Chemical mapping of a 207-nucleotide RNA with 2A3.
It was measured as part of the RMDB library OK3TST.
Reactivities are given for positions 27 through 156.
[RMDB]
RNA sequence: GGGAACGACUCGAGUAGAGUCGAAAAAGACAUAGAUUGGUGCUACCUACCUUGUAAGUUACCAGUGAGAUCCACACAUAUGCCCUAAAUAAGGAAUGCCAAAAUGAAUUCAAUGCUGGCAUAAUAGGAAGCAGCCCAAGAACAGCAUCUGUGUGAAGGUCAUCGGAUAUUUCGAUAUCCGAUGACCAAAAGAAACAACAACAACAAC
Reactivity to 2A3 in 0.01 (KOAc 150mM, MgCl2 10mM, bicine 150mM(pH8.5), 24C), signal-to-noise 2, nucleotides 027 to 156: a020g150a030c100a100u200a030g120a130u070u070g020g010u030g080c000u020a080c020c000u020a000c000c070u090u060g070u090a170a050g040u110u170a070c000c010a020g010u030g030a090g040a040u040c020c010a020c010a040c000a020u010a000u020g020c000c010c030u040a110a140a090u060a090a000g070g010a110a040u000g010c000c030a080a070a010a010u170g170a010a150u230u090c100a060a100u090g000c070u000g120g000c010a010u080a050a050u030a060g010g010a090a000g000c010a000g010c090c000c000a030a000g120a060a000c000a080g000c000a000u080c080u000g010u030g000u000g000a000a090

2A3 adducts were read by reverse transcription with SuperScript II with manganese. The reactions ran in a buffer of 150 mM KOAc, 10 mM MgCl2 and 150 mM bicine (pH 8.5), at 24 C.